[RMDB]
RNA sequence: GGGAACGACUCGAGUAGAGUCGAAAACAGGUGGUAUUUAGCAAUCUGAUGGGUUUGUUAUUGAGAAGAGAGGUAAGGGCUGAAUACAUAUAGAUUUGGGAAUCGCAGCUUAGAUGGGAUCACCCAGUCCUUUGAUUAUCUUCGGAUAAUCAAAGGAAAAAGAAACAACAACAACAAC
Reactivity to DMS in 0.01 (KOAc 150mM, MgCl2 10mM, bicine 150mM(pH8.5), 24C), signal-to-noise 4, nucleotides 027 to 126: c070a070g020g020u000g000g020u010a050u000u010u010a070g010c040a080a070u000c060u000g010a110u000g010g020g000u000u000u010g010u000u010a070u010u000g010a110g020a110a080g010a070g010a080g020g000u010a080a070g020g000g000c070u010g000a080a050u010a080c110a070u010a140u010a080g020a100u000u010u010g000g010g000a180a050u000c070g010c040a030g000c130u000u000a080g010a080u000g020g000g000a070u000c100a070c010c010c030a110g000
Reactivity to 2A3 in 0.01 (KOAc 150mM, MgCl2 10mM, bicine 150mM(pH8.5), 24C), signal-to-noise 2, nucleotides 027 to 126: c030a020g000g050u010g000g020u050a100u090u080u070a060g000c010a020a060u050c040u150g080a110u150g030g080g020u020u120u150g040u110u090a130u160u120g020a040g020a060a000g020a020g000a000g010g040u010a000a030g000g050g000c000u000g030a060a020u070a010c030a020u160a020u040a090g130a120u130u050u000g030g020g030a020a000u020c040g000c160a000g010c040u130u070a010g020a150u080g060g030g000a010u060c020a180c090c010c000a000g050